[RMDB]
Structure probing data (2A3 and DMS) for a 207-nucleotide construct. The RNA was probed in 150 mM KOAc, 10 mM MgCl2 and 150 mM bicine (pH 8.5) at 24 C. Values cover nucleotides 27 to 156. Source: RMDB library OK3TST, as collected in RNAgym.

RNA sequence: GGGAACGACUCGAGUAGAGUCGAAAAAUAUACCCCUGAGAUAUGUACACAGAUAUCCACCAAAACACAUGGCCAUCAGCCCUGGAAUGGAUCAAGGGUAGCAUAUUCACAUAGUGGAAUAUUGCACAUAGCAAUAUUGAUGAACCUCAGAAGCAUACUGAUACUGAUCAUUCGUGAUCAGUAUCAGAAAAGAAACAACAACAACAAC
Reactivity to 2A3 in 0.01 (KOAc 150mM, MgCl2 10mM, bicine 150mM(pH8.5), 24C), signal-to-noise 5, nucleotides 027 to 156: a000u170a010u090a070c010c010c000c030u040g030a050g010a050u050a010u070g060u060a040c070a000c010a050g050a080u060a010u080c010c000a020c010c030a050a060a130a020c120a030c050a140u130g030g000c020c010a180u100c110a130g000c000c000c000u030g010g040a080a090u050g030g020a030u050c060a070a080g060g030g000u030a020g030c010a010u050a040u100u090c040a030c020a070u120a050g080u090g070g010a010a000u010a000u020u040g030c010a050c060a180u180a050g000c000a010a000u000a010u030u050g050a100u090g040a050a050c000c020u010c020a030g060a120a010g060c050a050u120a200
Reactivity to DMS in 0.01 (KOAc 150mM, MgCl2 10mM, bicine 150mM(pH8.5), 24C), signal-to-noise 2, nucleotides 027 to 156: a120u000a100u000a060c000c000c010c010u030g000a140g020a070u000a030u010g020u000a070c050a210c060a150g000a200u010a120u010c000c010a130c030c020a030a060a100a090c110a150c030a070u000g000g020c000c020a040u000c110a140g030c040c010c000u000g010g000a100a150u000g000g020a050u010c080a070a070g020g020g010u000a060g030c070a020u000a040u000u000c060a020c050a100u000a110g020u000g000g000a040a040u000a020u000u000g050c020a100c160a100u000a190g000c010a010a040u020a040u000u000g000a120u000g010a080a080c050c030u010c010a050g010a070a060g040c030a070u000a130